[RMDB]
RNA sequence: GGGAACGACUCGAGUAGAGUCGAAAAGCCAAUCCGGCAUGGAGUAAGGCAGUCUUUAUUUCGCCUUACAAUUCACAGAAUGCUGUGUCUCGUUCAAUGCUGGGUCUUACCACUCAGACUGUUGAUUACCCCCAGCGGUUCGCCGCUGGGAAAAGAAACAACAACAACAAC
Reactivity to DMS in 0.01 (KOAc 150mM, MgCl2 10mM, bicine 150mM(pH8.5), 24C), signal-to-noise 3, nucleotides 027 to 129: g050c040c020a170a060u060c010c050g010g050c000a000u010g020g080a080g010u060a000a030g000g020c020a230g040u000c190u080u050u090a170u020u120u000c070g010c000c000u090u000a000c010a040a060u040u010c080a030c040a120g060a300a010u020g060c030u000g050u000g020u060c030u040c000g040u030u000c040a010a020u050g060c000u020g040g000g010u020c060u000u000a050c160c110a090c170u000c020a040g030a050c120u000g050u020u040g030a120u000u010a270c080c010
Reactivity to 2A3 in 0.01 (KOAc 150mM, MgCl2 10mM, bicine 150mM(pH8.5), 24C), signal-to-noise 4, nucleotides 027 to 129: g020c020c000a000a030u040c030c000g000g000c020a010u010g060g020a120g000u000a000a020g000g000c000a020g080u040c090u060u300u170a260u040u100u010c080g000c000c000u010u000a000c000a010a030u070u000c000a000c050a000g130a260a070u190g120c010u000g000u000g010u020c010u050c140g140u110u020c050a100a040u000g000c000u020g000g000g020u000c030u010u090a070c010c020a110c030u110c010a050g060a150c030u090g000u000u010g040a060u020u140a040c000c000
This 170-nucleotide RNA was probed chemically with DMS and 2A3. For DMS the reverse transcriptase was MarathonRT. The RNA was probed in 150 mM KOAc, 10 mM MgCl2 and 150 mM bicine (pH 8.5) at 24 C.